Structure probing data (DMS and 2A3) for a 207-nucleotide construct. DMS adducts were read by reverse transcription with MarathonRT. The reactions ran in a buffer of 150 mM KOAc, 10 mM MgCl2 and 150 mM bicine (pH 8.5), at 24 C. The 2A3 profile rests on 1,312 reads. The data come from the RNA Mapping Database (RMDB), library RNAMAK.
[RMDB]
RNA sequence: GGGAACGACUCGAGUAGAGUCGAAAACUACAGCUUCGGCUGUAGAAAAAUCCUAAGUCUAAAGGGAGAUCCACUCUUGGAUUUACAUCGGAAACGAUGUUGUCAGAAGAAGAUCGACGAUCUUUAGAUAUGGAAAAAACACUGGUUCGCCAGUGAAUUAACGCAGGUUAUUCGUAACCUGCGUUAAAAAAGAAACAACAACAACAAC
Reactivity to DMS in 0.01 (KOAc 150mM, MgCl2 10mM, bicine 150mM(pH8.5), 24C), signal-to-noise 2, nucleotides 027 to 156: c010u000a000c000a000g020c020u010u020c300g110g100c010u000g030u020a000g010a000a070a030a150a140u000c000c000u000a090a250g010u010c000u000a000a000a060g000g020g010a100g010a040u000c000c050a300c090u000c000u010u020g020g040a020u000u010u000a000c030a020u000c020g010g020a200a110a260c000g010a030u000g000u000u000g000u020c060a110g000a020a070g020a250a150g020a030u000c000g000a100c140g000a040u020c020u010u000u000a020g000a030u000a300u000g000g020a000a050a140a190a070a060c010a010c010u000g020g010u000u000c300g060c010c010a030g020u000g010a020a170
Reactivity to 2A3 in 0.01 (KOAc 150mM, MgCl2 10mM, bicine 150mM(pH8.5), 24C), signal-to-noise 2, nucleotides 027 to 156: c000u010a010c000a000g010c000u070u180c190g270g000c000u000g000u000a000g000a020a030a000a020a000u020c010c000u040a080a040g010u000c000u000a000a000a000g000g000g020a000g010a000u040c040c020a100c090u010c000u030u040g070g020a030u300u210u200a000c000a000u020c020g040g060a110a070a040c000g000a000u000g000u020u010g000u000c040a050g090a180a020g000a090a020g010a080u000c010g090a140c000g000a030u000c000u000u000u000a010g000a000u020a020u050g040g030a050a190a020a020a040a000c000a000c030u020g000g010u030u060c160g080c100c010a020g020u040g010a050a060